[RMDB]
Chemical mapping of a 177-nucleotide RNA with 2A3 and DMS.
RNA sequence: GGGAACGACUCGAGUAGAGUCGAAAACUAUACUGCCGGAAAUGCGCAAAUGGGCUGACGCGAUGAGACGGAAUGAGUAUAGGAGACGGCAUGAAGUGAUGUGCCGUCUCUACCGUCCAUAGUGUUAGGUUUCAGACAAUUUCGAUUGUCUGAAACCAAAAGAAACAACAACAACAAC
Reactivity to 2A3 in 0.01 (KOAc 150mM, MgCl2 10mM, bicine 150mM(pH8.5), 24C), signal-to-noise 4, nucleotides 027 to 126: c010u020a010u150a150c030u060g060c030c010g100g140a110a150a080u200g030c100g000c050a050a050a130u150g030g020g000c040u030g020a010c000g010c000g020a020u010g040a040g010a080c020g030g050a100a180u260g070a100g240u160a110u160a210g000g030a010g010a010c010g010g010c010a010u030g090a130a130g210u200g180a150u300g030u010g010c000c000g000u000c000u020c000u000a010c000c000g000u000c010c000a000u010a040g020u020g020u010u020a040
Reactivity to DMS in 0.01 (KOAc 150mM, MgCl2 10mM, bicine 150mM(pH8.5), 24C), signal-to-noise 2, nucleotides 027 to 126: c040u000a020u000a090c130u010g030c000c040g020g020a080a100a070u010g010c130g030c050a050a120a080u010g010g010g000c050u000g000a030c030g020c010g000a020u000g000a160g000a020c000g000g000a150a080u040g010a120g020u000a110u000a110g020g000a010g010a010c000g000g000c000a010u000g010a110a130g000u000g030a090u010g030u000g010c000c000g020u000c000u000c000u010a050c020c000g000u000c010c020a030u000a040g000u000g000u000u000a070